[RMDB]
RNA sequence: GGGAACGACUCGAGUAGAGUCGAAAACUGUUUCUGAUUGAUAACAAAUCGGCGGACAUCGAAUCGCUGAACUAUCAGAACGAUCGCAGCAACUACGUGACCACGGUCAUUCAAAAUGACGAUUUUAGUCCCUACGAGGCCAGCACACAAACCAUCAACCUCUCACUAAGUUCGCUUAGUGAGAGGUAAAAGAAACAACAACAACAAC
Reactivity to 2A3 in 0.01 (KOAc 150mM, MgCl2 10mM, bicine 150mM(pH8.5), 24C), signal-to-noise 7, nucleotides 027 to 156: c050u060g050u090u110u030c010u000g020a020u050u050g070a110u120a300a090c090a110a180a110u050c000g010g010c010g010g030a040c040a200u190c200g110a300a030u050c000g000c000u010g000a030a040c030u020a020u010c000a010g010a020a010c020g040a030u080c070g010c050a040g000c000a070a050c040u080a020c080g050u030g030a040c010c020a050c120g060g000u010c020a050u100u120c060a050a060a060a100u070g020a030c010g010a010u020u010u070u110a040g030u040c020c010c000u020a060c050g010a050g030g000c030c010a020g010c020a010c010a000c010a090a080a030c060c000a020u110c030a030
Reactivity to DMS in 0.01 (KOAc 150mM, MgCl2 10mM, bicine 150mM(pH8.5), 24C), signal-to-noise 2, nucleotides 027 to 156: c020u000g010u000u000u000c000u010g020a130u000u000g010a120u000a120a180c050a030a130a180u000c000g030g000c040g000g000a050c110a170u030c300g000a100a050u000c000g040c010u010g010a040a200c230u000a040u000c050a030g000a020a050c030g000a090u000c080g040c010a100g010c090a070a120c050u000a170c080g010u000g010a080c010c010a060c070g040g040u000c030a040u010u000c060a000a080a160a070u000g020a040c010g030a110u000u010u010u010a110g000u000c030c000c020u000a120c080g010a050g000g000c030c020a050g010c000a070c060a050c100a030a060a010c010c010a070u000c050a140
Structure probing data (2A3 and DMS) for a 207-nucleotide construct. The reactions ran in a buffer of 150 mM KOAc, 10 mM MgCl2 and 150 mM bicine (pH 8.5), at 24 C. DMS adducts were read by reverse transcription with MarathonRT.